[RMDB]
RNA sequence: GGGAACGACUCGAGUAGAGUCGAAAAUUGGCGAAUGCCUGUGGAUCUACAUUUGUUGCGGGUACGAGACCCGUCAGAGCCCGGCUCUGUAGCUCAAUGGUAGAGCGGUGUAUUCACAUAAACUUGUAAAAGACACGUGCCUUCGGGCACGUGUCAACAAGUAUUUACGGUUCGCCGUAAAUACUUGAAAAGAAACAACAACAACAAC
Reactivity to 2A3 in 0.01 (KOAc 150mM, MgCl2 10mM, bicine 150mM(pH8.5), 24C), signal-to-noise 5, nucleotides 027 to 156: u070u030g020g000c040g110a200a060u300g030c000c020u020g010u020g010g030a020u030c040u070a040c030a020u040u020u190g080u020u050g010c030g000g000g020u030a110c090g040a060g060a150c010c000c000g000u000c000a000g000a000g010c130c300c150g130g000c010u000c010u010g040u030a010g020c010u000c030a050a140u200g150g040u140a040g000a010g010c000g000g000u050g000u010a030u010u040c010a000c000a040u140a090a100a070c060u090u140g040u140a030a090a030a060g000a000c000a000c000g000u000g000c010c000u030u100c190g000g010g010c000a000c000g000u000g000u000c000a000a000
Reactivity to DMS in 0.01 (KOAc 150mM, MgCl2 10mM, bicine 150mM(pH8.5), 24C), signal-to-noise 3, nucleotides 027 to 156: u010u000g010g010c030g020a060a050u010g010c010c020u050g030u000g020g010a070u000c040u020a060c020a070u010u000u000g010u000u000g010c040g000g020g000u000a060c120g010a220g010a130c000c000c000g020u000c070a090g010a190g050c050c070c070g010g020c010u010c020u010g000u000a120g020c030u010c050a090a110u010g030g010u010a110g010a080g020c020g020g040u000g030u000a070u000u010c040a040c020a100u000a060a060a080c050u000u000g010u010a050a110a140a180g000a010c010a000c000g000u000g030c000c000u000u000c300g040g020g030c000a000c000g000u000g010u000c010a020a040